Conditions: 150 mM KOAc, 10 mM MgCl2 and 150 mM bicine (pH 8.5), 24 C.
Structure probing data (2A3 and DMS) for a 177-nucleotide construct.
DMS adducts were read by reverse transcription with MarathonRT.
2A3 is a SHAPE reagent: it acylates the 2'-hydroxyl of flexible nucleotides of all four kinds.
Values cover nucleotides 27 to 126.

RNA sequence: GGGAACGACUCGAGUAGAGUCGAAAAGAAGCUUCUAGCUUGCUAGAAGUGAAUUAGUGGCGCACGGGUGAGUAAGGUAUAGUUAAUCUGCCCUACACUGGGGGACAACACUUAGAAAUGAGUGCUAGUGAACCAAGAUAUUCGUAUCUUGGUUCACAAAAGAAACAACAACAACAAC
Reactivity to 2A3 in 0.01 (KOAc 150mM, MgCl2 10mM, bicine 150mM(pH8.5), 24C), signal-to-noise 5, nucleotides 027 to 126: g060a040a000g020c000u000u000c000u000a020g020c030u080u160g020c000u000a000g000a000a000g010u010g000a010a020u090u050a070g040u030g030g020c030g000c060a040c080g000g040g020u060g030a060g040u090a060a030g080g030u050a070u070a150g040u040u090a060a070u040c020u080g080c010c010c000u070a050c070a030c070u050g020g000g000g000g010a000c010a070a010c000a060c010u020u010a030g040a060a070a040u110g010a010g040u000g050c060u070a030
Reactivity to DMS in 0.01 (KOAc 150mM, MgCl2 10mM, bicine 150mM(pH8.5), 24C), signal-to-noise 5, nucleotides 027 to 126: g000a260a300g000c000u000u010c000u000a010g010c010u030u010g040c000u010a000g000a020a000g000u010g000a050a140u000u020a070g010u010g010g000c050g020c060a070c080g010g000g010u000g000a080g000u000a030a030g000g010u020a060u020a050g020u010u030a100a150u010c050u000g010c040c020c020u000a080c090a070c140u010g000g000g000g000g000a080c100a050a100c020a000c040u000u000a030g000a070a080a150u000g000a020g000u000g000c110u000a130